[RMDB]
RNA sequence: GGGAACGACUCGAGUAGAGUCGAAAAUCAAACCGAACCGGAUCCAGCAGAUCCUGCGCCGUUACUUCAAGCGGAUCCUGCCCAGGCCGCUGACCCUGAUCGAGGAUCCCAUGAGCCAGCUCAACCGACUACUAAGUCACUUCGGUGACUUAGUAGUAAAAGAAACAACAACAACAAC
Reactivity to 2A3 in 0.01 (KOAc 150mM, MgCl2 10mM, bicine 150mM(pH8.5), 24C), signal-to-noise 1, nucleotides 027 to 126: u070c020a020a050a000c060c000g050a080a040c040c030g010g010a010u010c020c010a030g090c020a000g060a050u090c000c040u050g010c060g050c000c040g080u030u070a090c050u140u140c050a140a000g000c070g120g000a130u060c000c000u040g030c010c010c000a020g000g060c000c020g010c030u020g050a050c010c000c010u020g010a070u020c040g020a010g050g010a010u000c010c000c000a040u060g020a000g070c030c040a060g000c020u030c070a010a130c030c000g040
Reactivity to DMS in 0.01 (KOAc 150mM, MgCl2 10mM, bicine 150mM(pH8.5), 24C), signal-to-noise 6, nucleotides 027 to 126: u040c080a060a100a120c050c010g010a080a080c070c070g000g000a050u010c050c020a090g000c070a100g000a080u010c020c050u000g000c060g000c050c030g020u020u010a080c110u010u010c100a070a050g020c040g000g000a100u010c020c010u010g000c080c050c080a140g000g020c040c030g020c020u000g010a050c070c040c010u000g010a060u010c060g000a100g020g000a100u020c020c030c040a090u020g000a060g000c010c030a070g010c030u010c070a070a120c130c050g010

Chemical mapping of a 177-nucleotide RNA with 2A3 and DMS. The data come from the RNA Mapping Database (RMDB), libraries RFM100 and RFMREP. The 2A3 profile rests on 1,072 reads. Reactivities are given for positions 27 through 126. Conditions: 150 mM KOAc, 10 mM MgCl2 and 150 mM bicine (pH 8.5), 24 C. 2A3 is a SHAPE reagent: it acylates the 2'-hydroxyl of flexible nucleotides of all four kinds.